[RMDB]
RNA sequence: GGGAACGACUCGAGUAGAGUCGAAAAAGCUAGUAUGUACGCAUACUAGCAUAGCGCAACCACUUGUGAAUCUCCAACACUCGGCUUUGUCCACGACUUUGUUGAAGAAUUGCAGGUGGUAGGUGAAGGCAAGUAGGAGUUUCGACUCCUACUUGCCAAAAGAAACAACAACAACAAC
Reactivity to DMS in 0.01 (KOAc 150mM, MgCl2 10mM, bicine 150mM(pH8.5), 24C), signal-to-noise 1, nucleotides 027 to 126: a150g000c000u000a000g000u000a010u000g000u040a120c090g040c030a000u000a000c000u010a010g000c020a030u000a020g070c070g000c080a180a000c010c000a000c000u000u000g000u000g000a060a080u000c000u060c070c000a010a000c000a100c300u000c000g000g000c070u130u060u000g030u070c090c050a170c060g000a080c210u000u000u000g000u000u000g000a060a020g000a040a070u000u000g010c000a000g000g000u000g000g000u000a000g000g000u010g000a100a110
Reactivity to 2A3 in 0.01 (KOAc 150mM, MgCl2 10mM, bicine 150mM(pH8.5), 24C), signal-to-noise 4, nucleotides 027 to 126: a000g010c010u000a010g000u010a000u020g030u030a000c210g000c120a010u000a000c000u000a000g000c000a020u070a000g070c070g000c020a020a000c000c000a000c000u030u010g010u010g020a020a080u010c010u020c000c010a010a010c000a010c020u030c060g000g070c100u220u230u210g110u200c040c020a070c150g090a110c090u130u130u100g000u000u020g000a020a010g000a050a080u030u010g000c000a000g000g010u020g000g000u010a030g010g000u030g030a110a060